Source information
Conditions: 150 mM KOAc, 10 mM MgCl2 and 150 mM bicine (pH 8.5), 24 C. Chemical mapping of a 177-nucleotide RNA with DMS and 2A3. For 2A3, 1,108 sequencing reads were counted. For 2A3 the reverse transcriptase was SuperScript II with manganese. It was measured as part of the RMDB library OK2TST.
RNA sequence: GGGAACGACUCGAGUAGAGUCGAAAACUGUGUAACUUUUUUUUUCUCUUAAAGAGGCCAGACCACCCUGUAGGAGCAUCGCCUCCCUCCAGGAGACAAACCAGCUCGUGGUCAACCUCCCGGAGCCACUAAUGACAUGGUUCGCCAUGUCAUUAGUAAAAGAAACAACAACAACAAC
Reactivity to DMS in 0.01 (KOAc 150mM, MgCl2 10mM, bicine 150mM(pH8.5), 24C), signal-to-noise 2, nucleotides 027 to 126: c060u000g010u020g000u020a160a140c020u000u000u000u000u000u000u000u000u000c020u010c030u010u000a080a060a170g000a020g020g010c050c030a110g000a070c010c020a040c030c030c060u000g000u010a120g000g000a050g030c070a110u000c200g010c070c010u000c000c020c030u010c130c070a020g010g020a040g000a050c100a030a110a070c130c060a070g000c140u010c090g020u000g000g010u000c010a110a140c090c040u000c000c090c150g000g000a040g010c300c160
Reactivity to 2A3 in 0.01 (KOAc 150mM, MgCl2 10mM, bicine 150mM(pH8.5), 24C), signal-to-noise 2, nucleotides 027 to 126: c030u050g000u100g110u220a080a200c180u180u130u070u000u020u030u020u180u060c010u000c000u110u100a150a030a030g000a010g020g000c030c020a070g030a080c000c000a020c010c010c020u020g020u050a030g020g000a020g030c030a210u230c050g010c070c000u040c050c020c000u000c060c000a000g010g000a090g000a050c070a000a060a060c040c000a020g050c090u100c100g070u010g030g010u010c020a020a020c020c020u000c010c010c030g010g010a010g000c030c010